An RNA of 177 nucleotides, treated with DMS and 2A3 and read out base by base.
RNA sequence: GGGAACGACUCGAGUAGAGUCGAAAAGAUAUGGAGCCAACUACCCACCCCGUUAUAUACAUCAUGAGGGUCUCGGAAACGAGACCUACCCACCAUGUGUAUAUAACGGGAGGUUGGCUCCUAAGUCCGAAGUAUUAGACUUCGGUCUAAUACUUCGAAAAGAAACAACAACAACAAC
Reactivity to DMS in 0.01 (KOAc 150mM, MgCl2 10mM, bicine 150mM(pH8.5), 24C), signal-to-noise 4, nucleotides 027 to 126: g000a170u020a190u000g010g000a040g030c010c000a000a000c000u000a190c020c000c020a300c070c010c000c010g020u000u000a000u000a010u000a010c000a000u010c030a020u020g000a160g010g000g010u010c010u000c010g000g000a110a130a280c000g020a030g000a020c000c000u000a000c040c030c060a300c110c000a020u020g010u000g000u000a000u000a020u000a000a010c000g000g000g000a010g010g010u000u010g010g000c000u000c000c000u010a000a100g010u000c150
Reactivity to 2A3 in 0.01 (KOAc 150mM, MgCl2 10mM, bicine 150mM(pH8.5), 24C), signal-to-noise 4, nucleotides 027 to 126: g170a060u300a200u300g000g000a000g000c000c000a020a000c030u300a300c030c040c010a030c020c010c000c000g000u000u000a000u000a000u010a000c060a060u300c010a010u180g020a030g000g020g000u010c000u010c010g070g000a130a110a060c010g000a000g010a010c000c010u020a020c020c040c010a100c000c010a010u010g010u000g000u030a000u010a000u000a000a000c000g020g000g000a000g010g000u000u000g000g000c000u000c000c000u000a010a000g080u090c120
Values cover nucleotides 27 to 126.
The reactions ran in a buffer of 150 mM KOAc, 10 mM MgCl2 and 150 mM bicine (pH 8.5), at 24 C.
Values are in units of 0.01, from 0 to 300, in steps of 10.